[RMDB]
RNA sequence: GGGAACGACUCGAGUAGAGUCGAAAAGUGCCUCGUCGGCCCGGCAUGCUAACCUGAUCCGAAGUUCAAGGUGGUUUCUCUGGCCUUCCAGAGAGAUGCGCGUCGGAAGAACCGACGAACAAACCUUAAAACAAAACGACGUUCGCGUCGUUUUGAACAACCUAGUCUCGUUCGCGAGACUAGGUUGAAAAGAAACAACAACAACAAC
Reactivity to 2A3 in 0.01 (KOAc 150mM, MgCl2 10mM, bicine 150mM(pH8.5), 24C), signal-to-noise 1, nucleotides 027 to 156: g030u040g050c030c010u000c000g010u000c010g000g050c000c000c000g070g030c010a010u050g020c020u040a010a010c000c000u030g000a050u090c020c130g260a280a070g050u070u060c060a130a070g020g000u000g010g000u020u070u050c000u000c020u010g020g020c050c060u260u160c010c000a000g000a000g000a030g000a010u140g060c000g000c000g020u020c000g000g000a050a000g000a090a040c000c000g000a000c000g040a060a000c010a020a030a030c000c040u170u300a040a210a000a000c000a000a000a000a000c000g020a010c000g050u080u060c180g030c020g090u000c000g090u040u010u000u000g000a060a000